The record gives the reactivity of an RNA of 207 nucleotides to 2A3. For 2A3, 700 sequencing reads were counted. The data come from the RNA Mapping Database (RMDB), library M2RFPK.
RNA sequence: GGGAACGACUCGAGUAGAGUCGAAAACAAGAUCGGUGGAUAGCAGCCCUAUCAAUAUCUAGGAGAACUGUGCUAUGGUUAGAAGAUUAGGUAGUCUCUAAACAGAACAAUUUACCUGCUGAACAAAAAAAUCCAAUGGCGUUCGCGCCAUUGGAAACUAUCGGCCAUUGUUCGCAAUGGCCGAUAGAAAAGAAACAACAACAACAAC
Reactivity to 2A3 in 0.01 (KOAc 150mM, MgCl2 10mM, bicine 150mM(pH8.5), 24C), signal-to-noise 2, nucleotides 027 to 156: c070a100a050g060a120u050c020g040g020u020g020g040a040u010a070g000c010a000g010c000c020c000u040a040u100c070a090a070u050a060u220c070u100a000g000g040a070g040a080a060c050u060g010u080g040c070u040a010u040g030g000u050u050a020g010a210a030g010a090u040u090a050g040g000u020a030g040u000c020u000c040u100a110a100a030c010a000g130a080a010c020a070a050u030u080u110a050c020c020u040g000c020u060g060a090a020c070a080a060a040a030a000a000a030u010c000c000a000a000u010g020g000c000g040u030u030c270g000c010g000c060c000a000u000u000g000g000a000a010a000